An RNA of 207 nucleotides, treated with DMS and 2A3 and read out base by base. Conditions: 150 mM KOAc, 10 mM MgCl2 and 150 mM bicine (pH 8.5), 24 C. 2A3 adducts were read by reverse transcription with SuperScript II with manganese.

RNA sequence: GGGAACGACUCGAGUAGAGUCGAAAAAAUGUCAAUAGCCGUUAUACGCGCAUUGAUUGAUAUUAACCGUUUAAAUAUUAAUGAUAAUUUAUGGGGAACUUAUAUUUACGAUUCACUUAAUGCAGAUGAAUGUCGAUUUAACGCAUUAAUCAACAAACACUCUUGAGAUAUUCGUAUCUCAAGAGUGAAAAGAAACAACAACAACAAC
Reactivity to DMS in 0.01 (KOAc 150mM, MgCl2 10mM, bicine 150mM(pH8.5), 24C), signal-to-noise 2, nucleotides 027 to 156: a080a060u000g000u000c040a010a040u000a170g020c020c020g050u000u010a110u010a130c050g050c080g040c070a060u000u000g000a040u000u010g000a080u010a060u000u000a040a190c010c040g010u010u000u010a140a060a070u000a140u030u000a090a100u010g000a150u010a040a060u000u010u010a090u020g000g010g030g000a070a110c100u010u000a070u000a110u000u000u010a020c070g020a150u000u010c020a080c070u000u000a020a070u000g000c080a130g020a080u010g010a040a040u000g010u020c070g020a170u010u000u000a110a110c080g020c030a020u010u000a060a080u000c040a050a070c000a090a080a180
Reactivity to 2A3 in 0.01 (KOAc 150mM, MgCl2 10mM, bicine 150mM(pH8.5), 24C), signal-to-noise 4, nucleotides 027 to 156: a000a000u090g000u010c000a010a000u010a080g010c020c010g020u120u180a190u120a240c040g130c000g010c020a010u010u060g050a020u000u040g020a010u080a070u150u130a120a050c000c010g000u060u110u150a040a130a030u140a040u150u170a090a060u060g010a030u050a210a060u170u080u240a180u210g000g000g000g070a020a040c030u160u080a070u080a100u300u050u020a040c040g030a050u020u080c000a010c060u030u060a040a020u120g000c050a040g040a100u030g080a140a030u090g100u170c040g020a070u030u060u110a120a020c070g010c010a000u000u060a020a030u100c020a010a060c030a070a060a050